[RMDB]
RNA sequence: GGGAACGACUCGAGUAGAGUCGAAAAGCGUACUACCUUGUCUUUUGACGGUAUAUCUGCUACCCACCGUGUCCCAAAUAGGACACGAGGCAGUAAGUACCGAUAAGACAAGGUAUCGCAAAACCCUUAUGGUACUCUUCGGAGUACCAUAAGGGAACCUCCAUUCCUUCUUCGGAAGGAAUGGAGGAAAAGAAACAACAACAACAAC
Reactivity to 2A3 in 0.01 (KOAc 150mM, MgCl2 10mM, bicine 150mM(pH8.5), 24C), signal-to-noise 2, nucleotides 027 to 156: g000c010g010u050a110c030u010a000c030c000u000u000g000u050c000u100u030u100u130g190a130c040g020g010u000a000u000a020u010c010u000g000c000u060a120c060c060c000a040c010c010g000u000g000u000c100c050c000a110a290a100u280a120g000g000a000c000a000c020g000a000g010g000c020a000g000u140a300a000g030u010a010c000c010g040a050u020a090a000g000a000c000a000a000g000g000u000a000u000c000g000c000a000a000a050a100c000c000c000u000u000a000u000g010g000u000a000c000u000c000u060u040c300g120g000a000g000u000a000c000c000a000u000a000a000g000g000g010a000a000
The record gives the reactivity of an RNA of 207 nucleotides to 2A3. For 2A3 the reverse transcriptase was SuperScript II with manganese. Values are in units of 0.01, from 0 to 300, in steps of 10. Source: RMDB library RNAMAK, as collected in RNAgym.